[RMDB]
RNA sequence: GGGAACGACUCGAGUAGAGUCGAAAACACGAACGAAUAGAGCAAUGCCUUAAACUGGAGCAUGUGGGACAUCGGCUCUUUGAAGAAAUACCAGAACUGGUAGUUGUUCGGCGAAGUCUCCACAAUCAGCUUAUGAUGGAUUCGUCCAUCAUAAGCUAAAAGAAACAACAACAACAAC
Reactivity to 2A3 in 0.01 (KOAc 150mM, MgCl2 10mM, bicine 150mM(pH8.5), 24C), signal-to-noise 5, nucleotides 027 to 126: c100a010c040g030a080a000c030g020a110a110u060a120g030a010g000c030a060a110u100g040c000c010u170u200a140a180a080c090u100g050g020a050g050c060a080u050g000u050g010g010g010a020c020a040u010c030g110g000c020u010c020u100u060u110g040a050a040g050a030a060a010u050a010c000c010a020g100a290a110c200u050g040g000u010a040g020u030u120g070u070u020c010g030g010c010g030a040a000g010u010c060u020c090c010a010c000a020a080u190c090
Reactivity to DMS in 0.01 (KOAc 150mM, MgCl2 10mM, bicine 150mM(pH8.5), 24C), signal-to-noise 4, nucleotides 027 to 126: c090a100c060g010a040a050c070g010a110a100u000a040g000a050g000c030a140a030u010g010c010c010u000u000a060a120a120c130u000g010g020a070g000c110a100u010g030u010g000g010g000a040c020a070u000c050g010g000c030u000c070u000u000u020g020a110a070g000a070a050a090u010a010c010c000a020g010a130a100c250u000g010g000u000a020g010u000u000g010u000u000c020g010g010c060g020a040a060g000u000c010u000c000c020a040c140a080a090u010c150